Source: RMDB library OK1LIB, as collected in RNAgym. The record gives the reactivity of an RNA of 177 nucleotides to DMS and 2A3. The reactions ran in a buffer of 150 mM KOAc, 10 mM MgCl2 and 150 mM bicine (pH 8.5), at 24 C. For 2A3 the reverse transcriptase was SuperScript II with manganese.
[RMDB]
RNA sequence: GGGAACGACUCGAGUAGAGUCGAAAAUAGCGGGGAGCCGUCUCGUCCAUGCUCGCCAUGUGGAACUCUUGCGUCAUGCCGUGCAGCAGGUACUCCGCAAGCUGGCAGUCCCACACCAUACCGCCGCUCACCAUGUAAUCUUCGGAUUACAUGGUGAAAAAGAAACAACAACAACAAC
Reactivity to DMS in 0.01 (KOAc 150mM, MgCl2 10mM, bicine 150mM(pH8.5), 24C), signal-to-noise 4, nucleotides 027 to 126: u010a070g010c030g000g010g000g020a150g020c050c070g000u000c030u010c030g000u000c050c040a050u020g020c040u010c030g000c050c040a090u010g000u000g020g000a050a110c100u000c060u000u010g000c020g000u010c060a140u010g000c050c040g030u020g010c100a140g010c040a060g020g010u010a050c100u020c030c000g000c060a040a070g030c110u000g020g000c030a110g020u000c010c020c000a120c090a060c070c050a080u050a110c050c020g020c020c060g030c090
Reactivity to 2A3 in 0.01 (KOAc 150mM, MgCl2 10mM, bicine 150mM(pH8.5), 24C), signal-to-noise 9, nucleotides 027 to 126: u130a010g020c020g000g010g010g010a030g030c030c020g060u040c040u030c020g030u010c020c020a050u080g020c020u050c050g040c030c020a080u130g020u070g060g080a090a060c020u020c000u080u070g020c020g040u050c040a050u100g030c020c020g090u090g020c030a040g010c010a020g020g030u060a090c020u010c020c020g000c020a010a010g040c050u080g030g000c010a020g040u050c010c000c010a030c000a010c010c010a040u090a120c020c030g020c010c010g010c020